[RMDB]
Conditions: 150 mM KOAc, 10 mM MgCl2 and 150 mM bicine (pH 8.5), 24 C. An RNA of 207 nucleotides, treated with DMS and 2A3 and read out base by base. The 2A3 profile rests on 3,907 reads. 2A3 is a SHAPE reagent: it acylates the 2'-hydroxyl of flexible nucleotides of all four kinds.
RNA sequence: GGGAACGACUCGAGUAGAGUCGAAAAUCCACAAUGAAUCUAGUCACUAAAUAAACACAAUUAGCUACUGUGUGUAAUAGUGAGUGUUGAUAACACAAAAUAAUAGUAUAGUUUUGGAAGAUUAUACGCGCCCUUGCUCCGUUCGCGGAGCAAGGAAGUUAUCUACGAUCUUCGGAUCGUAGAUAACAAAAGAAACAACAACAACAAC
Reactivity to DMS in 0.01 (KOAc 150mM, MgCl2 10mM, bicine 150mM(pH8.5), 24C), signal-to-noise 2, nucleotides 027 to 156: u000c010c010a100c100a150a200u000g030a140a080u000c070u000a160g010u000c010a020c020u010a010a020a080u000a180a160a010c000a020c010a030a050u000u000a230g020c200u010a070c090u010g020u000g010u000g010u000a090a300u000a000g000u010g010a070g000u000g020u000u010g000a090u000a100a060c020a100c030a080a040a080a190u000a060a300u010a030g010u000a030u000a020g010u000u000u000u000g000g020a260a170g000a040u000u000a030u000a010c000g030c050g000c110c000c000u000u000g000c020u000c000c020g040u010u020c280g010c030g040g010a010g000c000a000a000g000g020a020a030
Reactivity to 2A3 in 0.01 (KOAc 150mM, MgCl2 10mM, bicine 150mM(pH8.5), 24C), signal-to-noise 6, nucleotides 027 to 156: u020c020c000a080c060a080a160u270g080a070a040u050c110u120a080g120u030c010a000c000u010a020a040a050u060a030a040a000c000a000c000a030a100u140u090a070g050c060u160a090c070u020g010u000g000u000g000u010a030a030u000a030g000u000g030a030g020u030g010u000u070g060a120u240a290a050c070a020c050a050a130a050a040u240a120a060u070a130g010u010a010u000a030g000u000u000u090u190g130g040a110a060g010a060u030u030a010u020a030c020g060c010g060c050c010c000u000u000g010c000u000c000c010g030u040u040c080g020c010g100g000a000g030c000a000a000g000g000a000a000
It was measured as part of the RMDB library M2RFPK. Reactivities are rounded to 0.1 and cut off at 0 and 3.